[RMDB]
RNA sequence: GGGAACGACUCGAGUAGAGUCGAAAAGAUAUGGAGCAGCGAAUUCUGGUGAUCCAUGAACUACGCUACAGGUCGGAAACGACCUGCUAGCGCAUGGAUCACCAGAAAAUGUGCUGCUCCUAAGUCACGAACAUAUACAGUUCGCUGUAUAUGUUCGAAAAGAAACAACAACAACAAC
Reactivity to DMS in 0.01 (KOAc 150mM, MgCl2 10mM, bicine 150mM(pH8.5), 24C), signal-to-noise 6, nucleotides 027 to 126: g010a040u000a300u000g000g000a030g010c000a000g010c010g010a300a200u000u000c010u000g000g020u000g010a020u000c000c000a010u000g010a100a070c210u010a300c070g010c010u000a030c010a020g000g020u000c010g010g000a110a130a240c010g010a010c000c000u000g010c300u000a010g010c020g020c010a000u000g000g000a000u000c010a000c000c000a010g000a000a000a020a030u000g020u010g000c000u000g000c000u000c000c000u000a020a060g010u000c020a300
Reactivity to 2A3 in 0.01 (KOAc 150mM, MgCl2 10mM, bicine 150mM(pH8.5), 24C), signal-to-noise 2, nucleotides 027 to 126: g010a010u110a040u250g010g000a000g000c010a010g020c020g040a110a180u060u010c010u000g000g020u020g000a000u000c000c000a000u010g010a100a120c220u300a060c300g000c000u010a000c000a000g000g000u000c020g040g000a080a130a140c000g010a010c000c000u010g010c010u000a000g000c010g000c000a010u000g000g010a000u010c000a000c000c020a000g010a000a000a000a000u020g010u050g010c000u000g000c000u000c000c000u000a000a000g010u000c000a000